Record summary
Structure probing data (DMS and 2A3) for a 207-nucleotide construct. Reactivities are given for positions 27 through 156. DMS adducts were read by reverse transcription with MarathonRT. The 2A3 profile rests on 769 reads. The DMS profile rests on 2,095 reads. Source: RMDB library M2RFPK, as collected in RNAgym. The reactions ran in a buffer of 150 mM KOAc, 10 mM MgCl2 and 150 mM bicine (pH 8.5), at 24 C. 2A3 adducts were read by reverse transcription with SuperScript II with manganese.
[RMDB]
RNA sequence: GGGAACGACUCGAGUAGAGUCGAAAAAAUGCCGCCUCAGUUCCAAGCUCUUUCGUGGCACUGUAAACAGUCCUAUUGAGUUAGGGGCAGUCAACCACGUUGCGAAGCUAAAUGAUCUGGUCGAGAGUUACGAUUCCCUACUUCGGUAGGGAAUCAAACCUUUUAUGCCGUUCGCGGCAUAAAAGGUAAAAGAAACAACAACAACAAC
Reactivity to DMS in 0.01 (KOAc 150mM, MgCl2 10mM, bicine 150mM(pH8.5), 24C), signal-to-noise 1, nucleotides 027 to 156: a100a070u010g030c020c040g000c010c020u000c030a140g050u000u020c030c050a220a080g030c030u010c020u010u000u000c020g020u000g020g030c060a060c000u060g000u020a070a090a110c050a190g000u000c000c010u000a080u000u010g050a300g030u010u000a010g020g000g030g000c010a030g000u010c000a080a050c040c040a040c020g010u000u020g010c100g010a080a070g030c010u000a020a110a120u000g000a100u010c040u000g020g000u010c000g020a080g000a140g000u000u000a120c160g000a000u020u010c010c000c030u000a010c000u000u000c300g060g010u010a020g010g000g000a000a000u010c000a030a070
Reactivity to 2A3 in 0.01 (KOAc 150mM, MgCl2 10mM, bicine 150mM(pH8.5), 24C), signal-to-noise 1, nucleotides 027 to 156: a010a050u080g020c000c020g020c040c030u110c030a000g010u000u070c040c010a080a000g050c000u040c000u010u060u020c020g000u020g030g000c090a030c010u010g040u060a120a220a040c010a110g090u070c010c000u010a030u030u150g210a200g240u020u030a030g030g030g030g000c000a000g000u030c050a020a050c020c000a010c020g000u040u050g000c050g130a080a060g010c010u030a030a120a070u190g020a020u030c000u030g000g000u080c100g030a000g000a000g110u050u090a060c100g000a000u020u020c000c000c000u000a000c010u010u030c140g020g010u000a000g000g020g000a000a010u000c000a010a000